[RMDB]
RNA sequence: GGGAACGACUCGAGUAGAGUCGAAAAGGGUUAGCGUUCGCGCUAACCCCAGGAUCGAACAUCUCAAAUCUCGCAGACAUGAAACGAUCAAAAGCGAGAAAACUAGACAGUCAUUCGUGACUGUCAACGGGACAUGUACAUUCGUGUACAUGUCCCGAAAAGAAACAACAACAACAAC
Reactivity to 2A3 in 0.01 (KOAc 150mM, MgCl2 10mM, bicine 150mM(pH8.5), 24C), signal-to-noise 2, nucleotides 027 to 126: g020g000g000u000u000a000g000c010g000u020u020c260g000c010g000c120u010a010a010c010c000c000c020a070g060g060a050u100c070g030a070a050c010a130u050c040u000c070a120a160a110u000c000u000c010g000c000a010g080a240c030a050u170g130a160a110a050c080g070a060u040c040a000a020a000a110g020c030g000a000g000a010a030a010a000c080u070a080g000a000c010a010g020u020c000a000u020u070c170g070u030g010a010c000u000g020u000c000a000a020
Reactivity to DMS in 0.01 (KOAc 150mM, MgCl2 10mM, bicine 150mM(pH8.5), 24C), signal-to-noise 1, nucleotides 027 to 126: g000g000g000u000u000a000g000c000g020u000u030c100g050c050g030c000u000a000a010c000c000c000c010a040g000g000a000u000c000g000a110a200c270a090u000c010u000c020a040a130a150u050c000u000c060g030c020a100g000a100c200a120u020g000a040a070a070c060g000a070u000c030a030a100a150a140g000c000g000a020g000a060a000a080a010c300u010a160g000a000c000a000g000u000c000a010u010u000c100g010u000g000a020c000u000g000u010c000a040a070
Source: RMDB library M2PK50, as collected in RNAgym.
Structure probing data (2A3 and DMS) for a 177-nucleotide construct.
For DMS, 637 sequencing reads were counted.
For 2A3 the reverse transcriptase was SuperScript II with manganese.
Conditions: 150 mM KOAc, 10 mM MgCl2 and 150 mM bicine (pH 8.5), 24 C.